[RMDB]
RNA sequence: GGGAACGACUCGAGUAGAGUCGAAAAUGAGCUUGGCGAUUCUGAUACUCAGGAGGCUGAGGCAGGAGGAUCACGAGUUCCAACCUUAGCUGGGCUACAUAGUGAGUCCCUCACACCCUCUUGGAGACUAAGCUCAAGGAUUCGUCCUUGAGCUUAGAAAAGAAACAACAACAACAAC
Reactivity to 2A3 in 0.01 (KOAc 150mM, MgCl2 10mM, bicine 150mM(pH8.5), 24C), signal-to-noise 3, nucleotides 027 to 126: u090g000a000g030c030u050u030g020g010c080g070a070u070u000c020u000g040a060u090a260c000u010c040a020g030g050a090g270g040c030u020g010a000g000g020c030a030g040g130a040g020g010a010u030c010a000c090g030a050g050u070u040c000c010a070a110c030c000u070u160a050g010c050u060g000g000g020c000u080a060c040a140u080a070g050u090g100a010g050u030c000c000c030u020c000a040c000a020c030c000c010u060c040u040u070g080g030a070g030a040
Reactivity to DMS in 0.01 (KOAc 150mM, MgCl2 10mM, bicine 150mM(pH8.5), 24C), signal-to-noise 4, nucleotides 027 to 126: u010g000a070g010c030u000u000g010g010c070g010a090u010u000c020u000g000a200u010a110c040u000c030a050g010g010a160g000g010c030u000g000a020g000g020c140a070g020g010a060g000g010a090u010c040a040c080g000a090g020u000u000c020c140a080a100c060c070u010u000a070g020c060u000g010g000g010c040u000a090c100a070u010a160g010u000g000a060g010u000c020c010c010u000c030a060c070a230c100c020c020u000c050u000u000g000g010a140g020a220